Source information:
Source: RMDB library OK1LIB, as collected in RNAgym. An RNA of 177 nucleotides, treated with 2A3 and DMS and read out base by base. For DMS the reverse transcriptase was MarathonRT.
RNA sequence: GGGAACGACUCGAGUAGAGUCGAAAAUGUAUCUUUAAUAGUCUGUUAGAAACUAAGGAUAUGGAUUUGAGAGGUAGCGCACCUAGUCCACCUUCUGCAGUAAAAGAACUAGGGAUUAUGGCCCAUACAUUGGCCUUUAAUUCGUUAAAGGCCAAUGAAAAGAAACAACAACAACAAC
Reactivity to 2A3 in 0.01 (KOAc 150mM, MgCl2 10mM, bicine 150mM(pH8.5), 24C), signal-to-noise 6, nucleotides 027 to 126: u150g020u020a070u030c010u020u080u050a170a120u050a090g110u030c040u040g130u180u170a070g030a090a090a050c080u070a060a040g030g020a030u080a070u240g060g020a050u030u090u170g220a230g010a050g010g060u060a050g080c050g000c090a040c030c000u010a010g020u000c000c020a030c010c020u040u020c020u040g060c030a030g030u120a000a120a040a010g080a030a030c050u040a040g040g000g000a010u070u060a060u150g090g030c010c000c000a010u020a030
Reactivity to DMS in 0.01 (KOAc 150mM, MgCl2 10mM, bicine 150mM(pH8.5), 24C), signal-to-noise 4, nucleotides 027 to 126: u040g010u010a040u000c010u000u000u000a070a070u020a050g000u000c030u000g010u030u020a050g010a140a060a060c060u010a040a140g000g000a040u010a060u010g010g000a070u000u010u020g010a120g000a070g000g010u010a090g030c090g020c070a100c030c030u000a040g000u010c020c050a040c090c080u000u000c010u010g000c210a050g000u010a050a070a040a040g010a060a050c060u000a050g000g000g000a070u000u010a030u020g000g000c020c000c010a090u000a080